Description: An RNA of 177 nucleotides, treated with DMS and 2A3 and read out base by base. The RNA was probed in 150 mM KOAc, 10 mM MgCl2 and 150 mM bicine (pH 8.5) at 24 C. For 2A3, 1,219 sequencing reads were counted. High DMS reactivity at an A or C suggests that its Watson-Crick edge is free.
RNA sequence: GGGAACGACUCGAGUAGAGUCGAAAACGUCGAAGUCGCAGACCGUGGUGCCCUCGGUGACCGAGCCCGGCCUGGACAACACCUUGGCCGCCACCAGGAGAGCCUCGAUGAGGGUGGUCUUGCCGCCGAUAACGUCGAACUUCGGUUCGACGUUAUCAAAAGAAACAACAACAACAAC
Reactivity to DMS in 0.01 (KOAc 150mM, MgCl2 10mM, bicine 150mM(pH8.5), 24C), signal-to-noise 1, nucleotides 027 to 126: c160g000u000c040g000a080a100g000u000c170g010c040a050g010a070c000c020g040u000g030g040u000g000c240c020c040u010c090g000g000u020g020a070c140c070g030a110g020c070c050c050g030g030c000c020u020g000g000a100c070a040a110c140a170c040c010u000u000g000g000c030c020g020c070c040a060c020c070a110g000g000a180g010a130g020c060c010u000c090g000a160u030g000a130g010g010g020u000g030g000u000c030u000u010g050c100c050g020c030c070
Reactivity to 2A3 in 0.01 (KOAc 150mM, MgCl2 10mM, bicine 150mM(pH8.5), 24C), signal-to-noise 1, nucleotides 027 to 126: c020g030u010c020g020a060a000g040u100c070g000c090a010g020a010c000c010g110u160g120g130u190g020c030c020c000u030c020g040g060u090g040a090c050c070g020a010g010c010c030c060g030g000c020c000u000g040g040a040c050a100a000c010a130c000c000u050u090g080g000c030c000g000c060c020a100c000c030a040g020g060a110g030a000g040c020c040u030c060g040a090u210g000a030g090g000g020u130g000g060u000c040u150u210g040c010c000g000c020c030